Conditions: 150 mM KOAc, 10 mM MgCl2 and 150 mM bicine (pH 8.5), 24 C.
An RNA of 207 nucleotides, treated with 2A3 and read out base by base.
RNA sequence: GGGAACGACUCGAGUAGAGUCGAAAACUUAUCCGGUUUUAACGCUGUUUUAUUGGCGCAAAGGUUUACGGAUAAACAACUAAUAAUUAAACCUUUUGUGUGCGAAACGUGGUCGUUUAACGUACUCACUGCCCCCAGGGAUUCGUCCCUGGGGGAAUGAUUUAAUAAUCUUCGGAUUAUUAAAUCAAAAAGAAACAACAACAACAAC
Reactivity to 2A3 in 0.01 (KOAc 150mM, MgCl2 10mM, bicine 150mM(pH8.5), 24C), signal-to-noise 3, nucleotides 027 to 156: c020u020u020a000u010c060c000g010g040u000u000u000u020a050a020c000g010c000u040g090u110u210u090u220a130u170u260g030g020c000g010c040a010a000a000g000g000u010u000u000a000c000g030g010a010u050a040a110a020c040a020a010c020u220a070a130u170a180a050u160u140a020a010a000c010c000u010u030u110u110g050u010g010u020g050c030g010a090a030a010c010g040u140g150g100u220c050g020u030u040u140a090a020c000g000u010a020c020u020c100a040c060u100g020c010c000c000c010c020a000g040g010g000a010u010u050c040g010u000c040c000c000u000g010g000g010g000g010a000a010

2A3 adducts were read by reverse transcription with SuperScript II with manganese.